RNA sequence: GGGAACGACUCGAGUAGAGUCGAAAAAAAAAGAUAUGGACCUACUACCCACCCAGGCCAAUCCGAUGAAAGACUUCGGAAACGAAGUCUGGAGGAUUGCGCCUGGAGGUAGGUCCUAAGUCAAAAAUCUACACUAUCUCUUCGGAGAUAGUGUAGAAAAAGAAACAACAACAACAAC
Reactivity to DMS in 0.01 (KOAc 150mM, MgCl2 10mM, bicine 150mM(pH8.5), 24C), signal-to-noise 1, nucleotides 027 to 126: a100a000a120a210a110g040a180u000a140u000g010g000a010c020c000u000a010c020u000a080c000c000c070a300c040c000c000a000g010g000c000c010a030a000u000c000c000g000a160u000g000a190a280a030g030a010c000u000u000c050g010g000a080a060a160c000g000a030a040g010u000c000u000g030g000a000g000g000a000u000u000g000c300g000c000c000u000g000g000a000g000g000u000a010g030g000u000c000c000u000a040a080g040u060c220a080a190a050a070a110

This 177-nucleotide RNA was probed chemically with DMS. The reactions ran in a buffer of 150 mM KOAc, 10 mM MgCl2 and 150 mM bicine (pH 8.5), at 24 C. DMS adducts were read by reverse transcription with MarathonRT. Source: RMDB library TTRDES, as collected in RNAgym.